RNA sequence: GGGAACGACUCGAGUAGAGUCGAAAAACUCAAAAAUCUCAAUCUAACGAUUGAAGCUACCAACAGUGCCCAGUCCGAACACCGCGGUGACAGUCCACUCGUGCGGGAAACCCACGAUGCUGGUGUUGUCUUGAGCAAUGAAGAUGAUUUCUUGAGGCUAGUAUCUACCCUUCGGGGUAGAUACUAGAAAAGAAACAACAACAACAAC
Reactivity to 2A3 in 0.01 (KOAc 150mM, MgCl2 10mM, bicine 150mM(pH8.5), 24C), signal-to-noise 1, nucleotides 027 to 156: a000c050u090c050a080a100a000a000a060u080c050u000c040a100a050u010c010u100a160a000c060g010a000u000u030g010a050a020g040c030u060a050c050c020a000a070c030a040g050u020g020c010c000c000a000g050u000c010c040g060a080a060c030a020c080c050g020c070g020g020u010g050a050c060a030g060u010c020c000a020c010u040c000g020u040g040c180g040g000g000a040a010a020c000c000c000a020c000g030a070u080g020c160u030g000g090u010g010u000u070g000u000c040u050u090g060a060g000c060a020a090u070g020a070a050g080a070u060g040a040u000u010u010c040u000u100g040a090g160g000

This 207-nucleotide RNA was probed chemically with 2A3. The reactions ran in a buffer of 150 mM KOAc, 10 mM MgCl2 and 150 mM bicine (pH 8.5), at 24 C. Reactivities are given for positions 27 through 156. For 2A3 the reverse transcriptase was SuperScript II with manganese. It was measured as part of the RMDB library ARCHII. Values are in units of 0.01, from 0 to 300, in steps of 10.